[RMDB]
RNA sequence: GGGAACGACUCGAGUAGAGUCGAAAACUGACAAGCGUAGACAGCAAGAAAGCAGGGUUGAAUAGUGAUUGAGCUUCGAAACGUUAACUUCAGUCGGUCGACGUCUUAACUGGUGCGGAAGACAAUAUCAAUAAUAUUUCUUCGGAAAUAUUAUUGAAAAAGAAACAACAACAACAAC
Reactivity to 2A3 in 0.01 (KOAc 150mM, MgCl2 10mM, bicine 150mM(pH8.5), 24C), signal-to-noise 3, nucleotides 027 to 126: c000u040g050a000c020a080a040g000c000g030u020a030g010a100c050a020g010c010a010a040g050a100a040a000g030c010a010g030g030g090u100u090g070a140a080u090a110g050u030g040a060u030u050g040a010g000c010u070u070c030g020a040a060a040c040g020u080u090a040a060c010u060u050c040a040g010u040c030g080g010u020c020g020a060c020g010u000c000u090u040a090a060c060u030g020g060u120g060c020g010g010a020a010g010a030c010a020a030u120a060
Reactivity to DMS in 0.01 (KOAc 150mM, MgCl2 10mM, bicine 150mM(pH8.5), 24C), signal-to-noise 5, nucleotides 027 to 126: c040u000g010a100c160a070a080g020c040g000u000a040g010a080c090a060g010c050a070a100g010a060a050a090g000c030a050g010g000g010u000u000g010a070a060u000a070g020u000g010a090u020u000g010a140g000c040u000u010c070g010a050a070a040c080g000u000u010a060a070c080u000u010c070a070g010u000c060g000g010u000c040g010a060c070g010u000c030u010u010a060a090c100u010g020g010u000g000c040g010g010a040a060g000a060c060a050a060u000a110